[RMDB]
RNA sequence: GGGAACGACUCGAGUAGAGUCGAAAAUCUGGAGUAGAGGCUCUGCCUUCGAAACACCAUCGAUCGUCCCUUCUUCUUUACCUUCUUCUGGCUCUUCUUGGAGACGCGACCGGUGGCACCCCUGCUCGGUUCGCUCCAACCUGCUUUUGUUCUAUCUCAAAUUAGGCAUGUUCGCAUGCCUAAUUUGAAAAGAAACAACAACAACAAC
Reactivity to 2A3 in 0.01 (KOAc 150mM, MgCl2 10mM, bicine 150mM(pH8.5), 24C), signal-to-noise 1, nucleotides 027 to 156: u060c080u110g060g000a010g000u090a050g020a040g030g010c060u070c180u300g060c030c040u230u090c000g000a010a010a010c010a030c020c030a050u040c020g050a010u010c000g000u000c000c010c010u000u000c060u090u000c030u020u130u080a130c030c010u040u020c020u020u030c050u060g030g000c030u000c010u150u010c030u100u080g110g000a050g030a120c060g010c050g030a030c000c000g050g000u080g070g050c050a060c040c060c020c030u030g010c010u000c070g060g000u130u010c020g000c000u000c000c000a010a030c030c020u060g060c060u080u150u050u020g010u000u000c010u030a200u050c040u020
Structure probing data (2A3) for a 207-nucleotide construct. Conditions: 150 mM KOAc, 10 mM MgCl2 and 150 mM bicine (pH 8.5), 24 C. The 2A3 profile rests on 845 reads.